[RMDB]
An RNA of 177 nucleotides, treated with 2A3 and DMS and read out base by base. The reactions ran in a buffer of 150 mM KOAc, 10 mM MgCl2 and 150 mM bicine (pH 8.5), at 24 C. For 2A3, 2,440 sequencing reads were counted.

RNA sequence: GGGAACGACUCGAGUAGAGUCGAAAAGAUAUGGACAGGAGUAGGGAGCAACGUUCGGAAACGAACGAAUUGCUUUGAUCUACCCUGUCCUAAGUCAAACCGUUACCAAUGUUCGCAUUGGUAACGGGUUUUCCACUGGCUUCGGCCAGUGGAAAACAAAAGAAACAACAACAACAAC
Reactivity to 2A3 in 0.01 (KOAc 150mM, MgCl2 10mM, bicine 150mM(pH8.5), 24C), signal-to-noise 1, nucleotides 027 to 126: g000a000u010a030u100g000g020a000c000a000g050g050a180g050u020a010g050g220g260a040g050c000a000a030c000g010u000u000c000g030g000a020a020a000c010g010a000a010c030g070a090a090u070u020g000c000u140u120u300g190a100u070c000u010a000c000c000c000u010g010u000c000c000u000a000a010g000u000c030a010a080a160c010c000g000u010u000a020c030c000a010a000u000g020u020u100c300g030c210a010u000u000g000g000u000a000a000c000g000g000
Reactivity to DMS in 0.01 (KOAc 150mM, MgCl2 10mM, bicine 150mM(pH8.5), 24C), signal-to-noise 1, nucleotides 027 to 126: g000a040u000a210u010g000g000a040c000a010g000g000a080g020u000a020g000g000g010a040g010c020a010a040c000g000u010u000c020g010g000a030a020a050c010g020a010a040c000g000a100a140u020u010g020c000u000u000u000g000a180u000c000u000a010c010c000c000u020g000u000c000c000u000a010a070g000u010c040a130a160a300c010c000g000u000u000a010c000c000a020a000u000g000u020u010c230g030c000a010u000u020g000g030u010a000a000c010g000g010